[RMDB]
RNA sequence: GGGAACGACUCGAGUAGAGUCGAAAAGGGGUCUAGAUUCAACAAGCUGUAGGAACUACAGGCUGAAGCCUCCACGGCCUGCCGCAGAUAGCUUGCGCAUUUCUAGACGGAGGCACCCAAAGUUCCACCGAAUUACUUCGGUAAUUCGGUGGAACAAUCGCAGCAUAAGAUUCGUCUUAUGCUGCGAAAAAGAAACAACAACAACAAC
Reactivity to 2A3 in 0.01 (KOAc 150mM, MgCl2 10mM, bicine 150mM(pH8.5), 24C), signal-to-noise 2, nucleotides 027 to 156: g040g030g000g020u000c000u000a000g010a040u190u180c100a080a000c020a160a030g030c020u040g040u210a140g060g060a110a070c120u170a030c270a010g000g020c000u040g010a080a020g000c000c000u000c000c000a030c050g010g010c000c010u010g000c030c010g080c080a050g110a300u190a070g030c010u020u020g000c060g000c060a110u120u220u000c000u010a000g000a000c020g010g000a000g000g010c010a040c000c010c010a120a060a040g000u010u000c000c000a000c010c000g000a000a000u000u000a000c020u040u100c280g070g020u020a000a000u000u010c010g020g020u000g010g000a000a000c000a000a000
Chemical mapping of a 207-nucleotide RNA with 2A3. Conditions: 150 mM KOAc, 10 mM MgCl2 and 150 mM bicine (pH 8.5), 24 C. Values cover nucleotides 27 to 156.